[RMDB]
RNA sequence: GGGAACGACUCGAGUAGAGUCGAAAAGCAUCUAUCCACCGAUUGCUAGUUUGGCGAGUUUAUCGCGCUUGAUGAAGGACGGUAUUGGUGAGGGGCUUACUCGGGCUGAUCAUCCACAUCUAUCGGCCAUGUACUCCCUUUUCGAAGGGAGUACAUGAAAAGAAACAACAACAACAAC
Reactivity to DMS in 0.01 (KOAc 150mM, MgCl2 10mM, bicine 150mM(pH8.5), 24C), signal-to-noise 6, nucleotides 027 to 126: g020c050a050u010c030u000a110u010c110c060a050c050c040g010a100u000u020g020c020u000a140g020u000u000u000g000g020c010g010a040g000u000u010u010a090u010c050g020c040g010c070u000u000g000a070u010g010a150a180g020g010a050c050g000g010u000a070u010u000g010g010u000g010a100g000g010g010g020c040u000u000a060c050u000c070g000g000g010c020u010g000a050u010c100a080u010c030c040a060c160a090u000c100u000a080u000c050g000g020c130
Reactivity to 2A3 in 0.01 (KOAc 150mM, MgCl2 10mM, bicine 150mM(pH8.5), 24C), signal-to-noise 7, nucleotides 027 to 126: g000c010a050u000c020u100a090u030c040c040a020c020c010g120a120u050u170g040c020u020a060g040u040u090u150g090g000c060g010a030g030u080u210u190a210u120c030g000c010g020c060u050u130g060a100u090g050a100a030g050g020a020c030g020g000u080a060u060u100g010g010u050g030a090g010g070g000g000c010u010u030a020c010u020c000g010g020g000c040u040g030a090u080c020a070u040c040c010a100c010a120u050c060u100a150u080c020g050g020c030
Structure probing data (DMS and 2A3) for a 177-nucleotide construct. 2A3 adducts were read by reverse transcription with SuperScript II with manganese. For DMS, 9,853 sequencing reads were counted. The reactions ran in a buffer of 150 mM KOAc, 10 mM MgCl2 and 150 mM bicine (pH 8.5), at 24 C. 2A3 is a SHAPE reagent: it acylates the 2'-hydroxyl of flexible nucleotides of all four kinds.